[RMDB]
RNA sequence: GGGAACGACUCGAGUAGAGUCGAAAAGCGUAAAGUAUGAUGGUAGAGGCUGCCUCGUCUUUAUGGUUGUGAGGCUGUUUGAUCGCUAGUGAUCCUAUACCCAGUGUUGCAGAGGGCAUGGUACUCCCUGGCAAACAGUGUUCGCACUGUUUGCCAGAAAAGAAACAACAACAACAAC
Reactivity to DMS in 0.01 (KOAc 150mM, MgCl2 10mM, bicine 150mM(pH8.5), 24C), signal-to-noise 1, nucleotides 027 to 126: g030c030g000u000a030a020a040g010u020a070u000g020a080u010g030g020u000a060g010a090g020g010c040u000g020c000c010u000c070g020u010c040u000u000u010a040u010g000g030u000u010g010u010g010a090g010g010c030u000g010u010u000u000g000a060u000c060g010c070u010a130g020u000g010a090u010c050c030u010a060u000a090c030c020c030a080g050u000g010u000u000g010c040a000g010a120g010g000g000c030a060u010g000g010u000a060c120u000c040c050